[RMDB]
RNA sequence: GGGAACGACUCGAGUAGAGUCGAAAAAUUUGACUCAACGCGGGACAGCUUACCAGGCCCGACGGCCGGACGAGUGUUGUACACGAUAGGUCGAAGAGUGGUGCAUGGCCGUUACGACGAGUGAGGUGACACGUAUCUUCUUCGGAAGAUACGUGUCAAAAGAAACAACAACAACAAC
Reactivity to DMS in 0.01 (KOAc 150mM, MgCl2 10mM, bicine 150mM(pH8.5), 24C), signal-to-noise 2, nucleotides 027 to 126: a200u000u060u000g000a030c000u000c000a070a040c090g000c020g000g030g000a050c050a060g000c050u000u030a060c110c020a050g040g040c050c050c070g010a110c040g000g000c040c040g000g020a070c110g010a040g010u040g000u030u060g070u020a260c050a040c050g000a070u050a150g000g040u000c000g030a140a060g040a180g040u060g000g010u050g020c140a090u010g000g030c060c000g010u000u000a070c040g010a060c020g000a110g000u020g000a070g010g010u010
Reactivity to 2A3 in 0.01 (KOAc 150mM, MgCl2 10mM, bicine 150mM(pH8.5), 24C), signal-to-noise 2, nucleotides 027 to 126: a010u170u090u100g020a020c010u020c060a090a020c080g000c000g010g000g030a070c010a010g010c000u030u070a130c010c020a090g150g000c010c000c000g070a100c040g000g000c000c000g000g100a080c120g040a130g030u010g040u140u170g090u180a050c030a000c030g020a130u100a120g040g010u030c030g020a080a010g050a030g070u090g020g000u070g000c070a120u100g110g020c000c000g020u040u050a050c040g060a010c010g010a050g080u030g010a030g000g010u070